[RMDB]
RNA sequence: GGGAACGACUCGAGUAGAGUCGAAAACAUAUGACGGAGAGUGGUACACUCAGCGGAAACGCAUCCAAUGUCUGAAGUCUUUAAUGGGUAUAACAGUCAGUUGACCCAGAUCCCAACAGACAAUAAACCAGGUUUAUCUAUUCGUAGAUAAACCUGGAAAAGAAACAACAACAACAAC
Reactivity to DMS in 0.01 (KOAc 150mM, MgCl2 10mM, bicine 150mM(pH8.5), 24C), signal-to-noise 4, nucleotides 027 to 126: c080a110u010a060u000g010a070c070g000g000a050g010a030g030u010g010g040u020a060c070a050c010u000c030a140g000c020g010g000a080a060a110c060g020c010a300u000c020c060a110a120u020g000u000c010u010g010a170a130g010u000c040u000u000u000a140a180u000g000g000g000u000a030u000a010a020c020a170g020u010c230a100g000u000u000g010a020c010c000c010a010g000a090u000c000c010c010a090a140c020a020g000a040c030a050a060u000a070a070a180
Reactivity to 2A3 in 0.01 (KOAc 150mM, MgCl2 10mM, bicine 150mM(pH8.5), 24C), signal-to-noise 5, nucleotides 027 to 126: c020a020u210a050u200g050a040c050g060g000a010g000a010g060u070g050g200u200a060c030a000c060u000c010a020g010c010g020g000a030a030a000c020g000c010a010u030c020c020a090a120u070g010u010c000u010g070a060a010g020u000c030u000u050u030a040a040u030g000g020g020u050a140u030a300a020c010a030g300u280c040a050g000u180u020g030a010c000c000c000a010g000a020u020c000c000c010a010a030c010a010g020a000c030a030a090u140a080a040a010

About this RNA: Structure probing data (DMS and 2A3) for a 177-nucleotide construct. The reactions ran in a buffer of 150 mM KOAc, 10 mM MgCl2 and 150 mM bicine (pH 8.5), at 24 C. For 2A3, 6,314 sequencing reads were counted.